[RMDB]
RNA sequence: GGGAACGACUCGAGUAGAGUCGAAAAGACGACGACGGCGCACAAAUGUUCGAGCCGGCCGCUGACACGGUGCUUGGUGCCAAGAUGCUGGCGGCACGGCUCUACCGCCGGCGCAACAGCCCGAGCGGUGGAAUUAAAGGUUCGCCUUUAAUUCCACAAAAGAAACAACAACAACAAC
Reactivity to DMS in 0.01 (KOAc 150mM, MgCl2 10mM, bicine 150mM(pH8.5), 24C), signal-to-noise 9, nucleotides 027 to 126: g010a150c110g010a100c020g010a030c030g010g010c020g010c160a150c170a080a110a110u010g000u010u010c160g000a030g020c010c010g010g010c000c010g010c010u000g010a050c030a020c050g010g020u010g020c040u010u020g040g020u010g010c000c010a100a130g010a150u000g010c010u000g000g010c000g000g000c010a060c010g010g000c000u000c000u010a030c140c010g010c000c000g000g000c020g000c050a090a110c110a120g010c010c000c010g010a120g010c170g020
Reactivity to 2A3 in 0.01 (KOAc 150mM, MgCl2 10mM, bicine 150mM(pH8.5), 24C), signal-to-noise 7, nucleotides 027 to 126: g040a010c110g000a010c010g000a000c010g010g000c020g030c070a030c060a160a290a110u190g060u180u180c070g000a000g000c010c000g010g020c010c010g000c010u020g010a000c000a010c040g030g020u090g040c060u190u260g210g070u160g040c020c000a080a050g070a120u040g010c020u010g020g000c030g000g000c020a020c020g000g000c000u000c000u000a000c000c000g000c000c000g000g000c000g000c000a080a160c020a030g040c000c000c010g020a090g020c130g090
This 177-nucleotide RNA was probed chemically with DMS and 2A3. It was measured as part of the RMDB library OK2TRN. The 2A3 profile rests on 13,253 reads. For DMS, 14,492 sequencing reads were counted.